Conditions: 150 mM KOAc, 10 mM MgCl2 and 150 mM bicine (pH 8.5), 24 C. This 177-nucleotide RNA was probed chemically with DMS and 2A3. For 2A3 the reverse transcriptase was SuperScript II with manganese. For 2A3, 2,400 sequencing reads were counted. It was measured as part of the RMDB library RFMREP. The DMS profile rests on 3,888 reads.
RNA sequence: GGGAACGACUCGAGUAGAGUCGAAAAUUUGUUUUUGACUCCACAAACAAAAUCAAGUUCUGUCGAUACAGUAUGUGGGACAAUUAGAUAUGGAAACUAAUAAGCUUAGUUGAGGUGCAGGUGCAAGGAAUACGUCAAUGUUCGCAUUGACGUAUUCAAAAGAAACAACAACAACAAC
Reactivity to DMS in 0.01 (KOAc 150mM, MgCl2 10mM, bicine 150mM(pH8.5), 24C), signal-to-noise 4, nucleotides 027 to 126: u000u000u010g010u000u010u000u010u000g000a130c070u000c010c020a030c030a080a100a140c070a040a090a080a060u000c060a050a110g010u000u010c070u000g020u010c100g010a110u010a060c100a090g010u000a070u000g020u000g010g000g000a050c070a040a060u010u000a050g010a080u000a100u000g030g010a080a050a040c030u000a020a060u000a080a060g020c150u000u010a030g010u000u000g000a100g010g020u000g000c040a050g000g010u000g010c090a090a080g000
Reactivity to 2A3 in 0.01 (KOAc 150mM, MgCl2 10mM, bicine 150mM(pH8.5), 24C), signal-to-noise 3, nucleotides 027 to 126: u000u010u090g070u000u030u000u000u060g050a030c030u000c060c020a040c020a030a080a000c010a020a140a020a050u100c050a040a050g030u110u040c050u090g130u070c060g040a060u030a140c020a040g090u070a070u090g030u060g010g010g000a010c020a030a040u130u100a030g040a040u050a050u220g070g060a040a040a010c010u010a010a050u080a170a010g050c020u030u030a000g010u040u080g030a010g050g040u040g000c010a010g020g020u040g010c010a020a040g080